[RMDB]
This 177-nucleotide RNA was probed chemically with 2A3 and DMS. It was measured as part of the RMDB library M2PK50. The RNA was probed in 150 mM KOAc, 10 mM MgCl2 and 150 mM bicine (pH 8.5) at 24 C. Values cover nucleotides 27 to 126. For DMS the reverse transcriptase was MarathonRT.
RNA sequence: GGGAACGACUCGAGUAGAGUCGAAAACUAGUGCCAUUCGUGGCACUAGAAGGGGUCCAGCCUGGAAAGGCUGGAGGUAUUGGAAAGGUCGGGCCGCCAUUCAAGGUACGCUAUUCGUAGCGUACAACUAUGAACCCUUGUUCGCAAGGGUUCAUAGAAAAGAAACAACAACAACAAC
Reactivity to 2A3 in 0.01 (KOAc 150mM, MgCl2 10mM, bicine 150mM(pH8.5), 24C), signal-to-noise 2, nucleotides 027 to 126: c000u000a000g010u000g010c010c000a030u040u050c260g090u060g000g010c000a000c000u000a000g000a000a010g010g000g000g000u010c010c000a000g010c000c010u070g120g110a180a090a010g010g000c000u000g010g040a000g000g010u070a090u080u180g050g030a040a070a040g040g020u100c030g030g000g020c000c010g000c010c000a000u050u060c070a060a010g150g000u000a000c010g000c000u000a030u020u120c230g100u010a000g000c000g010u000a000c000a000a020
Reactivity to DMS in 0.01 (KOAc 150mM, MgCl2 10mM, bicine 150mM(pH8.5), 24C), signal-to-noise 3, nucleotides 027 to 126: c010u000a000g010u000g000c010c000a030u000u000c230g030u000g010g020c000a010c000u010a000g000a080a090g000g000g010g010u000c000c000a000g000c010c000u010g020g030a120a120a010g020g010c000u000g000g010a000g000g020u000a030u000u010g010g000a030a050a110g000g010u010c090g000g000g000c030c090g000c020c030a090u010u000c070a110a180g020g010u000a000c010g010c000u000a030u000u000c180g010u000a000g010c000g030u000a010c000a060a120